Source: RMDB library OK3TST, as collected in RNAgym. Chemical mapping of a 207-nucleotide RNA with 2A3.

RNA sequence: GGGAACGACUCGAGUAGAGUCGAAAAAGACUAGUACCAGUGACUCAGAUUCUGGGACGGAUGACGACUCGGAUGAAACGGAGGAUCGGAGCUCUAGUUCGUCAGAGUCGGAUAGUUCUGACGUUGAUUAUGGUACCCGUGUCUGUGGUAAAAAACGCAUCGGGCAUUAGUUCGCUAAUGCCCGAUGAAAAGAAACAACAACAACAAC
Reactivity to 2A3 in 0.01 (KOAc 150mM, MgCl2 10mM, bicine 150mM(pH8.5), 24C), signal-to-noise 1, nucleotides 027 to 156: a000g050a020c060u050a010g000u010a020c000c030a000g060u030g050a050c030u010c030a020g020a150u160u090c070u160g140g100g040a020c110g090g000a080u090g070a040c000g010a010c000u000c000g010g010a020u000g000a020a020a000c040g030g000a000g030g000a040u150c080g130g060a110g000c000u030c000u000a040g000u020u000c000g000u000c000a030g020a000g000u020c000g000g010a010u050a010g050u050u000c000u000g050a050c110g020u010u050g130a180u080u110a100u160g020g000u040a020c000c060c110g080u100g000u000c020u000g070u080g000g170u160a140a120a050a000a000a000c120g060
Reactivities are given for positions 27 through 156.
The reactions ran in a buffer of 150 mM KOAc, 10 mM MgCl2 and 150 mM bicine (pH 8.5), at 24 C.
2A3 adducts were read by reverse transcription with SuperScript II with manganese.